Background
Chemical mapping of a 177-nucleotide RNA with DMS and 2A3. The 2A3 profile rests on 852 reads. Source: RMDB library OK2TST, as collected in RNAgym. DMS adducts were read by reverse transcription with MarathonRT. The RNA was probed in 150 mM KOAc, 10 mM MgCl2 and 150 mM bicine (pH 8.5) at 24 C.
[RMDB]
RNA sequence: GGGAACGACUCGAGUAGAGUCGAAAAGAUGUAUUGGGUCUCAGGAGGGAAAAGCAACAUGGUUUCAGCAGUGAACACCACAUCACAGUUGCUAGUCAGCAGAUUUCGUAUGGCAGGAAAGAAACCAGUGCUAAAAUGGGUUCGCCCAUUUUAGCACAAAAGAAACAACAACAACAAC
Reactivity to DMS in 0.01 (KOAc 150mM, MgCl2 10mM, bicine 150mM(pH8.5), 24C), signal-to-noise 2, nucleotides 027 to 126: g010a070u000g000u020a070u000u000g000g000g000u000c050u010c050a110g000g000a090g010g000g020a060a060a090a050g010c050a030a030c030a140u010g000g000u000u010u000c040a060g000c220a070g010u000g000a040a060c130a130c060c110a090c110a080u010c100a010c130a100g010u000u010g020c030u000a080g010u010c060a060g000c080a050g000a110u000u000u000c090g030u030a050u000g010g000c050a110g000g000a070a070a070g000a090a050a060c070c060a070
Reactivity to 2A3 in 0.01 (KOAc 150mM, MgCl2 10mM, bicine 150mM(pH8.5), 24C), signal-to-noise 1, nucleotides 027 to 126: g020a020u090g020u230a160u040u110g000g000g090u010c010u000c090a040g080g040a060g030g040g010a020a060a000a070g000c000a000a050c050a090u030g000g070u000u090u090c050a040g020c010a060g000u030g030a000a000c040a030c070c000a010c030a150u040c020a000c010a090g010u050u100g030c020u020a000g050u020c030a010g040c000a050g010a150u080u160u090c060g060u100a150u050g030g000c040a020g000g200a090a010a050g000a030a040a020c070c000a060